About this RNA:
Structure probing data (DMS and 2A3) for a 207-nucleotide construct. 2A3 adducts were read by reverse transcription with SuperScript II with manganese.

[RMDB]
RNA sequence: GGGAACGACUCGAGUAGAGUCGAAAACAUUGUUCUGAUCAUCUGAAGAUCAGCUAUUAGAAGAGAAAGAUCAGUUAAGUCCUUUGGACCUGAUCAGCUUUAUACAAGAACUACUGAUUUCAACUUCAAAACGGGUGCUACUUCGGUAGCACCCGAACUAUAUGGUACCGUUCGCGGUACCAUAUAGAAAAGAAACAACAACAACAAC
Reactivity to DMS in 0.01 (KOAc 150mM, MgCl2 10mM, bicine 150mM(pH8.5), 24C), signal-to-noise 2, nucleotides 027 to 156: c040a140u000u010g000u010u000c000u010g000a040u000c000a200u000c120u010g010a200a230g020a000u000c030a020g040c120u000a100u000u000a160g000a060a010g000a100g010a170a100a050g010a010u000c020a000g000u010u000a070a060g000u000c000c020u000u010u000g030g000a080c030c000u010g040a100u000c150a050g020c020u000u000u000a120u000a110c070a060a040g010a030a040c000u000a080c000u010g000a060u000u000u000c020a100a300c010u000u000c020a070a100a100a110c020g030g030g020u000g020c000u010a010c010u000u010c300g050g020u000a000g010c000a000c020c000c000g000a000a020
Reactivity to 2A3 in 0.01 (KOAc 150mM, MgCl2 10mM, bicine 150mM(pH8.5), 24C), signal-to-noise 4, nucleotides 027 to 156: c040a080u070u110g040u180u080c010u000g040a020u020c010a020u000c070u210g070a140a060g000a060u000c000a000g010c010u130a150u210u160a040g040a100a000g030a000g090a050a120a000g020a010u010c000a000g010u060u110a150a010g000u040c040c000u080u120u250g040g010a020c010c010u020g040a080u050c030a010g010c000u100u100u040a200u050a060c050a070a000g010a100a020c050u110a040c010u090g050a080u050u090u070c070a110a050c020u080u080c030a030a020a020a050c020g000g000g000u000g010c000u000a020c010u020u060c160g080g000u000a000g010c000a000c000c000c000g010a000a000
It was measured as part of the RMDB library M2RFPK. The RNA was probed in 150 mM KOAc, 10 mM MgCl2 and 150 mM bicine (pH 8.5) at 24 C.